RNA sequence: GGGAACGACUCGAGUAGAGUCGAAAAGUUUGUUGGGCUCAUGGCUUUGAAUUAACGUCUGCAUCAUACUUUUGCAAGAUAGGUAAGGAACAGAAGUGUUGCAUGUGCAAUAGACGCGCUGCAGCGUGUAGAAUUAAUUGUUCGCAAUUAAUUCUACAAAAGAAACAACAACAACAAC
Reactivity to 2A3 in 0.01 (KOAc 150mM, MgCl2 10mM, bicine 150mM(pH8.5), 24C), signal-to-noise 4, nucleotides 027 to 126: g020u040u050u090g060u010u070g020g010g020c020u010c050a040u050g020g000c030u110u030u100g050a070a050u100u050a090a000c020g030u010c020u020g000c000a020u000c000a020u070a150c040u060u060u050u040g050c020a080a040g020a120u050a050g040g030u050a040a030g040g020a010a030c020a020g070a150a030g090u030g000u080u010g010c030a050u240g010u010g000c000a030a050u050a150g110a100c060g000c010g010c000u020g000c000a000g000c000g020u040
Reactivity to DMS in 0.01 (KOAc 150mM, MgCl2 10mM, bicine 150mM(pH8.5), 24C), signal-to-noise 6, nucleotides 027 to 126: g010u000u000u010g020u000u000g000g000g010c060u010c060a070u000g010g010c040u000u000u000g010a090a090u010u000a070a080c090g010u000c020u000g010c040a070u010c060a070u000a060c070u000u000u000u000g010c090a070a080g000a080u010a030g010g000u010a060a080g010g010a070a190c080a050g000a050a070g010u000g010u000u000g010c030a030u000g040u000g000c030a110a160u010a120g010a120c150g010c020g030c020u000g010c030a020g010c030g020u000